[RMDB]
Conditions: 150 mM KOAc, 10 mM MgCl2 and 150 mM bicine (pH 8.5), 24 C. This 177-nucleotide RNA was probed chemically with DMS and 2A3. For DMS, 3,322 sequencing reads were counted. DMS (dimethyl sulfate) methylates the pairing face of unpaired adenines and cytosines. For 2A3, 3,829 sequencing reads were counted. For 2A3 the reverse transcriptase was SuperScript II with manganese. Values cover nucleotides 27 to 126.
RNA sequence: GGGAACGACUCGAGUAGAGUCGAAAAACAUUUAUCUAUCCAGCCAUAGGGUAGAUCGGCAGCCACUCCUCCAAUACGAAAAUAAUUAUGCAUCAUUCGCAUACCGGUGGCAGCUUCGAAUAGGUCAGACUUACGUACAGUUCGCUGUACGUAAGUCAAAAGAAACAACAACAACAAC
Reactivity to DMS in 0.01 (KOAc 150mM, MgCl2 10mM, bicine 150mM(pH8.5), 24C), signal-to-noise 3, nucleotides 027 to 126: a040c130a130u010u010u010a040u000c000u000a000u010c000c000a120g020c070c110a130u020a020g000g020g000u000a000g000a000u060c080g000g020c010a130g010c000c000a010c020u000c030c010u000c010c030a020a030u060a090c260g060a040a030a080a070u050a040a060u010u010a020u030g020c040a070u060c220a200u040u010c120g000c030a010u000a020c300c110g000g050u020g020g100c020a010g000c060u030u030c050g040a040a020u020a050g000g020u020c110a160
Reactivity to 2A3 in 0.01 (KOAc 150mM, MgCl2 10mM, bicine 150mM(pH8.5), 24C), signal-to-noise 6, nucleotides 027 to 126: a000c090a030u130u200u140a020u000c000u000a010u010c000c000a020g200c050c020a160u230a140g020g000g000u000a000g010a020u000c010g050g000c000a010g000c010c010a000c010u060c030c000u060c030c030a080a150u200a160c180g160a090a090a030a050u250a050a110u240u110a020u050g000c000a020u030c010a060u170u270c070g000c010a000u030a110c080c050g010g000u000g050g000c020a020g020c020u090u110c040g120a090a100u100a160g080g000u110c070a040